[RMDB]
RNA sequence: GGGAACGACUCGAGUAGAGUCGAAAAGCAGUCGACUUCGGUCGACUGCAAAGAAUCACGACCAGCAGGUGAAAGCUGGAGGCAAAGAGCCAAAAUAAAUAAAAACGCUGAGCUUCGGCUCAGCGAAACCUAGAAAUAUGUUCGCAUAUUUCUAGGUAAAAGAAACAACAACAACAAC
Reactivity to 2A3 in 0.01 (KOAc 150mM, MgCl2 10mM, bicine 150mM(pH8.5), 24C), signal-to-noise 3, nucleotides 027 to 126: g000c000a010g000u000c000g020a030c050u090u110c250g110g020u010c000g000a000c000u030g010c000a000a000a000g010a010a060u100c030a010c130g070a080c030c000a000g010c000a030g000g290u180g200a160a080a020g000c010u010g000g010a040g010g000c020a070a160a220g080a130g030c020c020a080a040a030a070u150a030a070a020u130a030a080a030a000a000c010g000c010u000g000a000g020c010u020u080c250g080g000c000u000c000a000g000c010g000a020a000
Reactivity to DMS in 0.01 (KOAc 150mM, MgCl2 10mM, bicine 150mM(pH8.5), 24C), signal-to-noise 3, nucleotides 027 to 126: g010c020a030g000u000c000g000a020c000u010u000c160g010g030u010c010g010a020c020u000g000c010a010a080a090g000a150a090u000c060a110c120g000a280c010c010a020g020c010a040g000g010u000g000a090a120a120g010c000u000g020g010a150g030g020c010a060a100a100g010a220g000c020c020a080a050a080a120u010a090a080a150u000a060a070a120a100a110c010g030c000u000g000a000g000c000u020u000c200g010g000c000u000c000a010g000c010g000a000a040
The record gives the reactivity of an RNA of 177 nucleotides to 2A3 and DMS. For 2A3 the reverse transcriptase was SuperScript II with manganese. Conditions: 150 mM KOAc, 10 mM MgCl2 and 150 mM bicine (pH 8.5), 24 C. Source: RMDB library M2PK50, as collected in RNAgym.